RNA sequence: GGGAACGACUCGAGUAGAGUCGAAAAUUGGAUAAGUUGCUUGCUCAUCAAACGCUCCUAUCGGUAAUCGCACUCAAGGUUUGCCCCGUACCUACCGCAUAAAGGUUGUGCCUAUAACGAUUAUUGCCCAAUAUCGCAGAUUCGUCUGCGAUAUUGGAAAAGAAACAACAACAACAAC
Reactivity to DMS in 0.01 (KOAc 150mM, MgCl2 10mM, bicine 150mM(pH8.5), 24C), signal-to-noise 3, nucleotides 027 to 126: u010u000g020g030a080u000a040a110g020u000u010g000c040u010u000g010c010u040c070a040u010c070a050a100a140c130g000c090u000c010c010u000a090u020c060g010g000u000a030a060u000c110g000c050a080c040u000c120a050a070g010g000u000u000u010g000c010c020c020c040g010u000a070c020c000u000a070c060c040g000c110a050u000a070a100a130g000g010u000u000g010u000g020c030c060u000a090u000a060a090c140g000a070u000u000a120u010u010g000c270
Reactivity to 2A3 in 0.01 (KOAc 150mM, MgCl2 10mM, bicine 150mM(pH8.5), 24C), signal-to-noise 1, nucleotides 027 to 126: u070u030g040g010a000u030a170a060g070u070u120g010c010u070u090g010c000u000c100a080u040c010a040a040a090c050g000c030u070c030c050u060a060u060c040g060g030u000a080a090u040c040g000c010a010c050u090c070a070a030g070g010u050u090u100g040c000c000c000c000g010u000a040c040c000u000a040c010c010g060c050a030u150a050a100a000g050g020u030u000g000u010g020c010c030u110a130u040a220a040c050g010a040u090u080a100u070u260g020c000
Source information: Chemical mapping of a 177-nucleotide RNA with DMS and 2A3. Conditions: 150 mM KOAc, 10 mM MgCl2 and 150 mM bicine (pH 8.5), 24 C. For 2A3, 1,082 sequencing reads were counted.